[RMDB]
RNA sequence: GGGAACGACUCGAGUAGAGUCGAAAAAAUCGAUGGUUUCAAAAACAUAAUUGGAACAAUUAGCGGUAGAAGGCGGUCCUCUUGUAGUAGGGGCAGAUUUCAACUCACGUCAUGAACUGUGGGACCCACAAGCACGACAGUUCGCUGUCGUGCUUGUAAAAGAAACAACAACAACAAC
Reactivity to DMS in 0.01 (KOAc 150mM, MgCl2 10mM, bicine 150mM(pH8.5), 24C), signal-to-noise 1, nucleotides 027 to 126: a150a030u000c000g010a040u080g000g000u000u000u010c040a080a080a040a060a280c250a230u000a090a160u000u000g000g000a000a000c090a110a140u000u000a010g000c010g010g000u000a040g000a180a010g000g000c070g010g000u000c010c000u000c200u070u040g000u090a130g100u140a000g000g050g000g000c130a150g030a110u000u000u060c060a090a290c050u000c000a100c000g000u050c010a210u000g000a000a040c090u000g000u010g000g000g000a180c160c000c060
Reactivity to 2A3 in 0.01 (KOAc 150mM, MgCl2 10mM, bicine 150mM(pH8.5), 24C), signal-to-noise 2, nucleotides 027 to 126: a020a000u180c070g000a040u070g120g000u010u000u080c010a010a030a070a110a000c030a150u190a090a130u070u000g000g000a000a000c030a010a010u090u090a040g000c030g040g000u040a000g000a200a040g080g020c020g100g050u020c010c010u000c090u110u000g260u040a300g190u050a000g000g060g080g040c030a040g090a140u000u000u000c000a030a020c000u000c000a040c000g000u010c090a050u150g140a100a030c110u060g020u030g000g030g070a130c000c010c000

Chemical mapping of a 177-nucleotide RNA with DMS and 2A3.
The data come from the RNA Mapping Database (RMDB), library OK1LIB.
For 2A3 the reverse transcriptase was SuperScript II with manganese.